Structure probing data (2A3 and DMS) for a 207-nucleotide construct. It was measured as part of the RMDB library OK3TST. Conditions: 150 mM KOAc, 10 mM MgCl2 and 150 mM bicine (pH 8.5), 24 C. For 2A3 the reverse transcriptase was SuperScript II with manganese. The 2A3 profile rests on 4,156 reads.
[RMDB]
RNA sequence: GGGAACGACUCGAGUAGAGUCGAAAAGGGGUUUUUUUAUUGCAUGUAACAUAGCAAUAUCGCAUAAUCACUACACUGUUUCAAUGAAUAAAAUGAGGUGUAAUUAUGGCUUUAUAUCGCACUGGUACGGCUGCAAUGGACGCGCAAGGCGUUAUUAUGAUCUUAUCUUAUUCGUAAGAUAAGAUCAAAAAGAAACAACAACAACAAC
Reactivity to 2A3 in 0.01 (KOAc 150mM, MgCl2 10mM, bicine 150mM(pH8.5), 24C), signal-to-noise 3, nucleotides 027 to 156: g040g000g000g000u050u070u040u000u010u070u050a050u040u030g000c010a020u090g040u140a080a050c040a120u140a060g020c010a020a020u020a040u070c050g000c060a020u050a080a030u120c060a010c120u080a030c020a010c020u040g110u080u120u080c120a140a090u130g140a120a080u200a170a100a050a040u150g070a050g010g010u020g010u040a040a030u050u030a030u040g070g020c000u030u100u010a090u030a030u120c060g000c040a030c060u010g000g020u050a030c030g050g040c050u020g000c010a020a050u050g040g010a020c030g020c010g010c050a040a020g150g000c030g030u010u010a050u060u050a060
Reactivity to DMS in 0.01 (KOAc 150mM, MgCl2 10mM, bicine 150mM(pH8.5), 24C), signal-to-noise 4, nucleotides 027 to 156: g010g010g030g000u010u010u000u000u010u010u010a030u000u000g000c010a120u000g020u010a110a140c100a110u000a160g010c000a040a040u000a020u000c150g030c050a090u010a050a030u010c070a080c060u000a040c020a070c300u000g000u000u000u000c040a100a150u010g020a090a110u010a050a040a050a100u000g010a100g030g030u000g030u000a030a100u000u000a060u000g020g020c040u000u000u000a050u010a060u020c050g040c020a090c060u020g030g050u010a040c010g010g010c030u000g000c020a070a070u010g010g020a040c010g040c030g020c050a070a090g000g010c020g020u010u000a050u000u000a130